Notes: Chemical mapping of a 177-nucleotide RNA with 2A3 and DMS. The DMS profile rests on 783 reads. Conditions: 150 mM KOAc, 10 mM MgCl2 and 150 mM bicine (pH 8.5), 24 C. For 2A3, 2,296 sequencing reads were counted. It was measured as part of the RMDB library TTRDEL. DMS adducts were read by reverse transcription with MarathonRT.
[RMDB]
RNA sequence: GGGAACGACUCGAGUAGAGUCGAAAAGAUAUGGAAUGUAUGGAGCGACUUCCUCGUUGAAAUCGGAAACGAUGGAGAGGAGUCGUGAGGUACAUUCCUAAGUCAAACCAUGACUUCGGUCAUGGAAGACAAGAGGGUACUUCGGUACCCUCUUGUCAAAAGAAACAACAACAACAAC
Reactivity to 2A3 in 0.01 (KOAc 150mM, MgCl2 10mM, bicine 150mM(pH8.5), 24C), signal-to-noise 1, nucleotides 027 to 126: g010a010u050a040u110g000g010a010a000u020g020u020a000u040g120g110a050g060c010g020a010c040u300u190c040c000u020c020g170u240u060g040a020a020a000u020c000g050g000a000a110a000c030g000a010u010g000g020a030g010a000g030g000a000g010u010c010g020u020g010a010g000g020u010a000c000a000u010u030c010c000u000a040a010g030u000c050a060a040a110c000c000a000u010g000a000c030u030u060c300g070g000u000c000a000u010g000g010a100a050
Reactivity to DMS in 0.01 (KOAc 150mM, MgCl2 10mM, bicine 150mM(pH8.5), 24C), signal-to-noise 1, nucleotides 027 to 126: g000a070u000a300u000g040g020a000a010u000g010u000a000u000g000g000a300g010c020g000a000c000u000u080c020c010u000c000g000u010u040g000a080a150a010u010c000g020g000a110a150a260c070g040a010u000g020g000a060g020a010g010g000a000g000u000c000g000u000g010a290g000g000u030a000c020a040u000u000c000c040u000a000a020g030u000c020a070a160a300c010c000a070u000g000a010c000u000u000c250g050g000u000c000a000u010g000g000a040a060